[RMDB]
Conditions: 150 mM KOAc, 10 mM MgCl2 and 150 mM bicine (pH 8.5), 24 C. The record gives the reactivity of an RNA of 207 nucleotides to DMS and 2A3. High 2A3 reactivity points to a flexible backbone, as in loops and unpaired stretches. The data come from the RNA Mapping Database (RMDB), library ARCHII.
RNA sequence: GGGAACGACUCGAGUAGAGUCGAAAAAUGCAUGUCGAGAGUAUAUGUCCUCUCGUUAAUCAAACAUAUAUUGUUAUAGUCGCAAACGACGAAAAUUACGCUCUAGCAGCUUAAACCCUGUUUACUUGGUUGCUGAUCAUCUACAGUUGGUCAACUAGAAUAUCUUUUUCUUCGGAAAAAGAUAUUCAAAAGAAACAACAACAACAAC
Reactivity to DMS in 0.01 (KOAc 150mM, MgCl2 10mM, bicine 150mM(pH8.5), 24C), signal-to-noise 2, nucleotides 027 to 156: a070u000g010c060a100u010g010u010c000g000a030g030a020g020u000a100u000a020u000g000u000c150c010u000c020u010c000g000u000u000a020a040u000c050a060a040a030c010a020u000a050u000a170u010u010g000u010u000a150u000a170g000u010c020g020c090a100a150a150c040g010a070c040g010a050a060a060a100u000u000a070c080g020c050u000c040u000a060g010c020a070g060c040u000u000a060a100a090c050c050c030u000g000u000u000u000a070c120u010u000g010g020u000u000g000c010u010g020a050u000c080a040u000c090u010a060c090a120g030u000u000g010g010u000c000a020a040c050u000a210
Reactivity to 2A3 in 0.01 (KOAc 150mM, MgCl2 10mM, bicine 150mM(pH8.5), 24C), signal-to-noise 4, nucleotides 027 to 156: a000u130g020c070a030u110g040u120c010g000a000g000a000g020u010a000u020a020u070g010u070c060c000u010c010u010c020g100u050u020a010a010u010c010a010a010a000c000a000u010a010u010a040u060u150g060u100u120a120u050a260g050u040c040g010c140a160a140a080c060g040a000c010g030a040a040a010a010u120u070a050c060g020c010u010c050u100a030g020c050a000g000c000u050u100a050a060a050c010c030c010u010g060u020u060u050a110c070u060u120g040g010u020u050g020c030u030g020a050u040c020a010u000c030u110a140c040a070g010u020u020g030g000u040c020a030a020c050u050a030